Source information: An RNA of 177 nucleotides, treated with DMS and 2A3 and read out base by base. The RNA was probed in 150 mM KOAc, 10 mM MgCl2 and 150 mM bicine (pH 8.5) at 24 C. The data come from the RNA Mapping Database (RMDB), library RFM100.

RNA sequence: GGGAACGACUCGAGUAGAGUCGAAAAGCGGUGUGCUUCGCCAGAGUCAGCUUGCCGCCGCGCAGGCGGAAAGCGCUGCGCGUGUAGUGCGCCGACUGGCGGCCGUUGCGGGGCUUGAAACGCGGGUUAUUUACCAGCUGUUCGCAGCUGGUAAAUAAAAAGAAACAACAACAACAAC
Reactivity to DMS in 0.01 (KOAc 150mM, MgCl2 10mM, bicine 150mM(pH8.5), 24C), signal-to-noise 2, nucleotides 027 to 126: g000c020g000g000u000g030u000g000c040u000u010c030g060c000c010a010g010a070g020u030c090a130g020c000u020u010g020c010c030g000c010c000g020c250g000c170a070g000g030c000g000g000a040a020a040g000c010g010c040u000g010c100g010c010g010u040g010u030a030g050u010g000c030g020c000c000g000a070c040u010g000g030c050g010g010c060c040g010u030u000g010c110g000g010g000g000c030u010u000g010a030a030a080c070g000c040g020g000g000u000
Reactivity to 2A3 in 0.01 (KOAc 150mM, MgCl2 10mM, bicine 150mM(pH8.5), 24C), signal-to-noise 4, nucleotides 027 to 126: g020c010g030g020u050g010u050g050c030u080u040c010g000c010c000a010g010a030g110u080c040a010g010c000u060u120g040c000c020g000c000c010g010c050g050c060a020g040g050c010g030g050a090a080a030g050c100g000c010u020g000c020g000c010g020u140g080u100a120g030u060g030c020g000c000c010g010a030c020u010g000g020c000g030g020c000c010g000u010u010g020c020g010g000g020g000c050u040u070g040a100a090a010c030g010c010g030g030g010u020